[RMDB]
Structure probing data (2A3 and DMS) for a 170-nucleotide construct. For DMS the reverse transcriptase was MarathonRT. Reactivities are rounded to 0.1 and cut off at 0 and 3. For 2A3, 4,685 sequencing reads were counted.
RNA sequence: GGGAACGACUCGAGUAGAGUCGAAAAUGCGGUGAUCCUCCCUCUCCUUGUCGGUGAACCCGCUCUUGUGAGGCCUCUUCCCAGGUCCGGAGUCGACCUCCAUCUGAUCCGUCCGGGGCCUCUUCGCUAAGGUUGGCGUUCGCGCCAACCAAAAGAAACAACAACAACAAC
Reactivity to 2A3 in 0.01 (KOAc 150mM, MgCl2 10mM, bicine 150mM(pH8.5), 24C), signal-to-noise 3, nucleotides 027 to 129: u220g010c030g010g040u080g020a090u040c000c030u020c030c030c000u040c000u000c020c010u090u110g120u090c070g000g000u070g070a050a080c050c000c000g000c000u060c030u090u150g070u050g020a020g020g000c000c000u030c020u030u020c000c010c020a000g040g000u010c040c010g070g030a020g020u070c060g040a130c020c040u040c020c000a030u070c020u050g030a030u040c000c000g050u000c040c030g020g000g000g000c000c000u000c030u030u030c030g020c010u040a050a040
Reactivity to DMS in 0.01 (KOAc 150mM, MgCl2 10mM, bicine 150mM(pH8.5), 24C), signal-to-noise 3, nucleotides 027 to 129: u020g030c000g010g010u010g010a120u060c000c050u000c030c040c000u000c030u010c010c050u000u000g030u020c060g030g040u080g020a120a170c060c010c010g030c090u030c060u020u040g030u030g010a050g010g050c010c000u000c040u030u040c020c010c090a070g020g060u040c040c110g000g000a050g030u030c140g040a100c100c060u000c070c110a000u030c090u040g020a090u060c040c060g100u040c080c000g010g010g120g040c000c030u010c030u020u050c000g030c070u000a030a160